[RMDB]
RNA sequence: GGGAACGACUCGAGUAGAGUCGAAAAGAAAAACGAUGCAUGAGCCUAAUAUACGGACGGCGCUAGCAAAACAAACAAAAUCCGAUGCAAGCGUAUAUUAAAGAAUGCAUUGGAAAAGAAAAGAAAACGUGGAUACUAGGUUCGCCUAGUAUCCACGAAAAGAAACAACAACAACAAC
Reactivity to 2A3 in 0.01 (KOAc 150mM, MgCl2 10mM, bicine 150mM(pH8.5), 24C), signal-to-noise 1, nucleotides 027 to 126: g060a070a030a000a000a000c100g060a090u060g050c000a090u020g110a000g000c000c000u000a000a080u060a000u000a080c060g070g030a060c040g070g000c040g000c030u050a000g000c030a000a160a000a120c160a070a130a030c010a000a080a030a060u010c000c000g020a030u080g000c000a000a050g000c000g010u060a000u000a000u050u220a210a130a000g080a020a040u030g000c000a000u000u000g010g000a000a110a080a000g050a010a080a000a000g160a000a170a030a000
Reactivity to DMS in 0.01 (KOAc 150mM, MgCl2 10mM, bicine 150mM(pH8.5), 24C), signal-to-noise 1, nucleotides 027 to 126: g010a010a110a020a050a160c160g000a150u000g000c020a080u010g000a220g000c040c000u060a160a050u000a020u000a100c000g000g000a060c090g000g000c110g020c010u000a300g040c030a070a010a050a270c090a120a150a070c090a080a080a000a040u010c010c020g060a100u000g000c090a060a040g010c040g000u000a100u050a010u020u000a000a000a100g000a170a080u000g000c000a000u030u020g000g020a020a010a000a010g030a140a000a100a000g010a040a040a020a020

The data come from the RNA Mapping Database (RMDB), library OK1LIB. The record gives the reactivity of an RNA of 177 nucleotides to 2A3 and DMS. 2A3 adducts were read by reverse transcription with SuperScript II with manganese. The reactions ran in a buffer of 150 mM KOAc, 10 mM MgCl2 and 150 mM bicine (pH 8.5), at 24 C. Values are in units of 0.01, from 0 to 300, in steps of 10. For DMS the reverse transcriptase was MarathonRT. The 2A3 profile rests on 897 reads.